[RMDB]
RNA sequence: GGGAACGACUCGAGUAGAGUCGAAAAUGGUUGCGACCUGAGUUCGAGCGCGAUGUACUUUCCGGCCCGUCGGUGGUCAUUGAUGGCGUGGAAUACUGGUCGUUUUGGGAGGAGAACGAAUCGAUCGAGAACCUUGUUGCGCUACGCGAUGCCGAUCCAAGUGCGAGACUUUCGAGUCUCGCACUUGAAAAGAAACAACAACAACAAC
Reactivity to 2A3 in 0.01 (KOAc 150mM, MgCl2 10mM, bicine 150mM(pH8.5), 24C), signal-to-noise 1, nucleotides 027 to 156: u110g070g030u050u200g060c010g000a030c060c020u060g010a030g160u010u030c020g160a020g060c020g010c040g100a030u080g030u080a000c000u130u240u000c020c000g080g010c080c010c040g170u080c030g080g050u070g000g020u000c030a030u000u210g070a080u130g100g030c030g000u110g080g000a020a020u080a220c030u060g000g050u040c030g000u040u050u100u060g010g010g020a040g020g000a010g010a050a000c010g020a020a070u040c040g010a040u090c040g000a010g010a100a060c010c010u030u090g060u010u020g010c030g000c040u030a030c030g010c000g040a040u040g030c010c000g030a000u010c030
This 207-nucleotide RNA was probed chemically with 2A3. 2A3 adducts were read by reverse transcription with SuperScript II with manganese.